About this RNA:
This 177-nucleotide RNA was probed chemically with 2A3 and DMS. The reactions ran in a buffer of 150 mM KOAc, 10 mM MgCl2 and 150 mM bicine (pH 8.5), at 24 C.

[RMDB]
RNA sequence: GGGAACGACUCGAGUAGAGUCGAAAAACUAAGGUGCUUGGAUGACACAGCUGUCAAGGGGCAGAGUCAGAGGCUACAAACACGACUUCCUGACUUCCAUCCGGGGGGAACUUUGCUCAGAUCACCACCUGUGGCUAAAGUUCGCUUUAGCCACAGGAAAAGAAACAACAACAACAAC
Reactivity to 2A3 in 0.01 (KOAc 150mM, MgCl2 10mM, bicine 150mM(pH8.5), 24C), signal-to-noise 1, nucleotides 027 to 126: a000c030u080a080a000g090g010u060g020c040u150u140g050g060a070u060g020a030c000a020c020a150g090c060u070g060u130c040a140a120g030g010g000g040c020a000g000a020g080u000c030a020g020a020g100g000c020u090a050c090a080a250a000c090a060c130g190a150c050u030u030c000c000u010g050a080c010u100u030c040c010a060u040c000c040g010g000g000g010g000g010a030a000c000u070u090u020g000c000u030c040a030g000a160u090c020a010c090c000a050
Reactivity to DMS in 0.01 (KOAc 150mM, MgCl2 10mM, bicine 150mM(pH8.5), 24C), signal-to-noise 1, nucleotides 027 to 126: a160c090u000a070a020g000g030u010g000c080u000u000g000g010a090u030g000a110c110a050c110a060g010c120u010g010u000c030a100a180g000g040g030g030c060a050g010a070g000u000c030a060g010a150g010g000c030u010a140c060a080a090a130c170a060c170g000a110c050u000u000c080c000u000g010a130c070u010u000c030c020a120u000c060c040g010g020g020g000g000g000a030a040c060u000u010u000g010c020u010c000a070g010a060u000c040a040c110c040a180